[RMDB]
RNA sequence: GGGAACGACUCGAGUAGAGUCGAAAAGAUCCGUACAGUACGAGCUGGUACGUCGAUCAUGCAUGCCAUGCUAGGCGCUCUCUAGGUACAUGCUAGGUACACACGAGUCGAUCAGAGUACAUGAGUAUACCGGUUAUCAGUUCGCUGAUAACCGGUAAAAAGAAACAACAACAACAAC
Reactivity to DMS in 0.01 (KOAc 150mM, MgCl2 10mM, bicine 150mM(pH8.5), 24C), signal-to-noise 4, nucleotides 027 to 126: g000a020u000c010c000g000u000a020c020a030g010u000a100c210g020a120g000c030u000g010g010u000a020c020g000u010c130g020a010u000c010a060u010g000c030a050u010g020c170c130a080u000g010c040u000a090g020g020c140g000c070u010c040u000c030u020a050g010g010u000a110c020a040u000g010c050u000a080g020g000u020a080c130a060c030a120c030g000a030g000u000c020g010a080u000c030a120g020a120g010u020a060c090a050u000g020a100g000u000a080
Reactivity to 2A3 in 0.01 (KOAc 150mM, MgCl2 10mM, bicine 150mM(pH8.5), 24C), signal-to-noise 2, nucleotides 027 to 126: g030a030u000c000c000g000u010a010c010a000g030u060a050c120g080a100g160c040u080g000g220u020a000c010g050u040c090g020a010u020c010a050u070g030c020a000u140g090c180c020a090u150g050c040u060a030g080g020c050g010c050u000c000u010c020u110a080g080g000u030a030c000a040u110g090c030u070a050g060g060u070a020c040a000c010a000c020g000a000g020u040c020g040a040u050c020a020g100a020g220u080a020c050a120u150g020a050g020u070a020
Conditions: 150 mM KOAc, 10 mM MgCl2 and 150 mM bicine (pH 8.5), 24 C. An RNA of 177 nucleotides, treated with DMS and 2A3 and read out base by base. The DMS profile rests on 3,007 reads. The data come from the RNA Mapping Database (RMDB), library OK2TRN.